Record summary: Chemical mapping of a 177-nucleotide RNA with 2A3 and DMS. Source: RMDB libraries RFM100 and RFMREP, as collected in RNAgym. 2A3 adducts were read by reverse transcription with SuperScript II with manganese. DMS adducts were read by reverse transcription with MarathonRT. The RNA was probed in 150 mM KOAc, 10 mM MgCl2 and 150 mM bicine (pH 8.5) at 24 C.
RNA sequence: GGGAACGACUCGAGUAGAGUCGAAAAUUGAUGUCACCACCGAUGUGAUAUGGCAAGCCGCAGUUGGCAAAGGAAACGUAGGGGCCACGCUCGAACAUGAUGAUUUCAGCGUCUUCGCUGAGUCGACCGUAAUACACGAAUUCGUUCGUGUAUUACGAAAAGAAACAACAACAACAAC
Reactivity to 2A3 in 0.01 (KOAc 150mM, MgCl2 10mM, bicine 150mM(pH8.5), 24C), signal-to-noise 9, nucleotides 027 to 126: u070u070g040a020u060g030u040c020a010c040c010a060c030c050g050a070u110g040u030g050a050u030a050u130g070g000c050a060a040g050c010c010g030c070a060g040u100u080g050g000c020a080a040a040g090g000a070a090a020c050g020u080a050g030g010g010g000c000c010a030c020g030c010u040c030g050a070a030c040a090u170g020a050u090g010a010u130u300u060c010a000g010c010g060u050c090u270u230c050g000c010u010g000a000g010u010c000g020a050c010
Reactivity to DMS in 0.01 (KOAc 150mM, MgCl2 10mM, bicine 150mM(pH8.5), 24C), signal-to-noise 9, nucleotides 027 to 126: u020u020g010a080u010g010u000c030a050c020c040a120c100c100g010a090u010g010u010g000a060u000a050u010g010g020c060a090a100g020c040c040g020c080a100g010u010u010g000g000c070a050a070a100g010g000a050a060a050c080g010u020a080g000g010g000g000c040c040a040c070g000c030u010c050g000a050a080c150a070u020g000a080u010g000a040u000u020u000c020a020g000c010g000u020c190u010u020c020g020c020u000g000a030g010u000c010g010a100c190

In probing experiments dimethyl sulfate is read out at A N1 and C N3, which are open when not base-paired.